[RMDB]
RNA sequence: GGGAACGACUCGAGUAGAGUCGAAAAUACAGUACGCUAGGCGGUACCAUGACUAGGGAUCACGUAUGCAGGUACACUAGCGAUAGCGUACAUGCUAGGACGUACUCAUGCUAGCAUGAUGCGUCUACAGUGCAAGAGAGUUCGCUCUCUUGCACUGAAAAGAAACAACAACAACAAC
Reactivity to 2A3 in 0.01 (KOAc 150mM, MgCl2 10mM, bicine 150mM(pH8.5), 24C), signal-to-noise 4, nucleotides 027 to 126: u140a010c050a020g040u010a010c010g010c010u010a010g080g050c040g080g000u000a000c010c030a300u070g070a210c030u050a050g040g070g180a220u250c090a020c210g170u090a070u150g040c030a020g000g000u020a000c090a080c130u080a030g010c020g010a020u010a010g000c010g010u010a010c010a040u040g060c020u040a040g020g030a010c010g040u040a030c080u020c030a010u060g000c020u100a050g050c000a000u010g010a010u010g020c010g000u000c010u020a030
Reactivity to DMS in 0.01 (KOAc 150mM, MgCl2 10mM, bicine 150mM(pH8.5), 24C), signal-to-noise 3, nucleotides 027 to 126: u010a130c100a120g010u000a010c010g020c010u000a030g000g000c030g010g010u000a020c010c000a070u000g000a090c040u000a080g020g000g000a170u020c230a130c060g000u000a040u000g000c050a040g000g000u010a000c000a100c150u010a060g010c070g000a110u000a000g010c000g010u000a000c010a050u010g000c090u000a130g000g000a020c020g020u000a030c260u010c000a010u010g000c040u010a100g020c010a000u010g010a040u000g000c010g000u000c000u000a090